[RMDB]
RNA sequence: GGGAACGACUCGAGUAGAGUCGAAAAUCAUUCAUAGACUGCCUUUGGAGCAUCUCUUUCUCUUUCCUGGUCUCAGUCUUCUCAUCUGGGAAAUGGGGCUGCUCAGGGGAGAUGAGAGCUGUGAGCACCGUUUGUAAACUUUGCACAUUGCGCUGCACGAUAGGGAGUACUUCGGUACUCCCUAUCGAAAAGAAACAACAACAACAAC
Reactivity to 2A3 in 0.01 (KOAc 150mM, MgCl2 10mM, bicine 150mM(pH8.5), 24C), signal-to-noise 2, nucleotides 027 to 156: u080c030a010u170u030c010a020u080a090g080a120c090u050g030c010c000u130u090u170g130g020a090g010c030a060u020c010u000c030u050u150u000c050u000c000u050u040u060c000c000u000g030g040u050c060u010c080a060g070u010c000u140u000c040u030c030a210u090c070u210g040g000g030a010a030a000u030g010g000g000g040c010u010g000c030u070c030a000g010g000g020g000a050g000a000u060g010a000g000a000g050c010u040g010u040g040a000g000c010a040c060c050g030u000u100u080g140u070a170a030a070c000u050u090u020g020c050a020c010a080u110u250g020c050g030c090u060g020c000a010
This 207-nucleotide RNA was probed chemically with 2A3.